[RMDB]
RNA sequence: GGGAACGACUCGAGUAGAGUCGAAAACGCCUUGCCAACGCAAGGGAUUUCAGUAUGUUGCAAGCCAUUUCGACGGCUUGUGCCAUAGAUCUUGUAUGCGCUGUCCAAAUACAAGGCCCGCGCAAAUUUCUAUCAUCAGCUUCGGCUGAUGAUAGAAAAAAGAAACAACAACAACAAC
Reactivity to 2A3 in 0.01 (KOAc 150mM, MgCl2 10mM, bicine 150mM(pH8.5), 24C), signal-to-noise 1, nucleotides 027 to 126: c020g060c000c000u000u000g040c050c110a250a040c190g000c000a000a000g000g020g000a000u000u040u010c030a000g110u000a010u000g020u040u000g000c000a000a000g000c000c030a050u100u110u160c160g140a130c110g000g000c000u010u000g000u000g000c010c000a000u000a020g070a100u130c040u070u060g060u210a030u030g020c000g000c000u020g030u000c000c010a020a080a040u190a170c130a040a090g000g000c000c000c070g030c000g000c000a000a000a220u000
Reactivity to DMS in 0.01 (KOAc 150mM, MgCl2 10mM, bicine 150mM(pH8.5), 24C), signal-to-noise 1, nucleotides 027 to 126: c170g020c000c010u010u000g010c080c190a000a130c300g010c000a030a030g000g000g000a070u000u010u030c240a190g010u000a000u000g010u000u000g010c000a020a000g010c030c000a300u070u010u050c180g000a150c140g020g000c000u010u000g030u000g070c100c030a000u000a020g000a140u040c000u010u010g000u000a010u000g000c030g020c040u000g010u020c030c010a070a100a060u020a160c090a090a280g030g090c040c060c270g000c030g060c010a000a090a060u000